This 177-nucleotide RNA was probed chemically with DMS and 2A3.
It was measured as part of the RMDB library M2PK50.
For DMS, 4,554 sequencing reads were counted.
Values cover nucleotides 27 to 126.
For DMS the reverse transcriptase was MarathonRT.

RNA sequence: GGGAACGACUCGAGUAGAGUCGAAAAACCUGAUGAUUCGUCAUCAGGUCACAUGCCGCCCGAACGGCUUCCUGACCGGGCGGAUUCUCUUUAAAUGGAGCACUGCUGCAUCAUUCGUGAUGCAGAACCUUAACGAAAUCUUCGGAUUUCGUUAAGGAAAAGAAACAACAACAACAAC
Reactivity to DMS in 0.01 (KOAc 150mM, MgCl2 10mM, bicine 150mM(pH8.5), 24C), signal-to-noise 4, nucleotides 027 to 126: a000c000c000u000g000a000u000g010a030u000u010c160g020u000c000a010u000c000a010g010g000u000c040a060c270a110u000g000c000c000g000c000c010c000g000a050a160c070g010g000c030u000u010c010c010u000g010a130c220c010g000g010g010c000g000g000a010u000u000c020u000c010u020u000u000a060a070a080u010g010g010a030g010c060a150c290u010g010c000u000g000c000a000u000c000a040u000u010c190g020u000g000a020u000g010c000a000g000a040a090
Reactivity to 2A3 in 0.01 (KOAc 150mM, MgCl2 10mM, bicine 150mM(pH8.5), 24C), signal-to-noise 5, nucleotides 027 to 126: a000c000c010u010g000a000u000g000a000u020u100c190g060u020c090a010u000c000a000g000g000u010c010a080c000a040u170g020c000c000g000c000c020c000g000a040a010c060g070g010c000u240u120c010c000u010g010a030c000c040g010g000g000c010g000g000a010u030u020c010u000c000u030u270u150a150a200a150u220g010g000a010g020c010a030c140u210g010c020u000g000c010a000u010c000a010u030u090c180g110u020g000a000u010g000c000a000g000a000a030